[RMDB]
RNA sequence: GGGAACGACUCGAGUAGAGUCGAAAAGGUCAUCCUUCACAGGAUCGUGUGGAAGUCCUGUUCGGGGCGGAAGCAUUAAAACCAUUCGAGCUAGUCAAUGCGUGGCGUGUCUCUCCGCAGCGUGUUGUGUAUGAGAGUGGAUUCGUCCACUCUCAAACUAUAGCUCUGCAUUCGUGCAGAGCUAUAGAAAAGAAACAACAACAACAAC
Reactivity to 2A3 in 0.01 (KOAc 150mM, MgCl2 10mM, bicine 150mM(pH8.5), 24C), signal-to-noise 2, nucleotides 027 to 156: g020g010u100c030a050u080c020c000u170u140c090a030c020a060g080g020a080u090c090g030u110g020u080g090g050a070a000g020u030c010c020u050g060u110u130c120g000g020g020g000c000g000g000a000a020g000c000a000u000u130a040a050a010a050c030c010a010u080u080c040g070a040g030c170u150a100g270u150c020a010a060u080g020c010g050u000g020g000c030g020u010g020u010c010u010c000u020c080c000g030c050a020g010c020g000u020g000u000u000g040u000g060u060a100u160g010a000g010a010g000u000g020g000a000u040u090c180g060u020c000c000a000c000u020c000u000c000a000a000a000
Reactivity to DMS in 0.01 (KOAc 150mM, MgCl2 10mM, bicine 150mM(pH8.5), 24C), signal-to-noise 1, nucleotides 027 to 156: g050g000u010c070a080u020c020c020u050u000c140a130c120a190g020g020a020u000c030g000u010g030u010g020g000a250a140g010u000c000c000u010g030u000u010c060g010g010g000g000c060g050g050a270a300g030c030a080u000u000a050a090a130a050c030c060a100u000u000c070g000a080g030c050u000a130g030u010c070a050a020u030g030c050g040u000g000g000c080g060u000g040u000c020u000c060u010c080c040g000c020a080g050c030g000u020g000u030u000g000u000g000u000a150u000g000a010g000a010g040u010g000g030a070u000u000c190g020u000c000c010a030c010u020c000u010c000a010a000a100